[RMDB]
Notes: Structure probing data (2A3) for a 207-nucleotide construct. The reactions ran in a buffer of 150 mM KOAc, 10 mM MgCl2 and 150 mM bicine (pH 8.5), at 24 C.
RNA sequence: GGGAACGACUCGAGUAGAGUCGAAAACAUCUCGACAAGAGGCGGCGGUCCUCAGUGCUCUUACUCUUUUCUGUAAAGAGGAGACUGCUGGACCCGCCGCCCAAGUUCGAGCAUGAGCCAAGUUCCGAGCGAGGAGAUCGCGAGGGGCAGGAACAGCGAGGGGUUAUUAGUUCGCUAAUAACCCCUCAAAAGAAACAACAACAACAAC
Reactivity to 2A3 in 0.01 (KOAc 150mM, MgCl2 10mM, bicine 150mM(pH8.5), 24C), signal-to-noise 1, nucleotides 027 to 156: c020a020u010c000u000c000g020a000c030a020a150g140a110g090g050c010g010g010c000g010g020u000c000c000u000c000a040g010u140g300c030u000c030u150u220a300c010u040c000u080u080u120u110c110u180g240u290a110a000a000g010a010g020g020a000g000a000c000u000g030c050u060g050g000a000c000c030c000g040c000c000g000c000c000c000a000a010g010u050u060c000g000a000g070c070a010u030g040a000g020c010c000a040a050g020u020u000c000c000g000a000g020c000g000a010g170g020a300g040a150u010c010g000c010g020a000g000g000g000g000c020a010g000g070a130a050c030a040g120c060
Values are in units of 0.01, from 0 to 300, in steps of 10. The data come from the RNA Mapping Database (RMDB), library VIROID.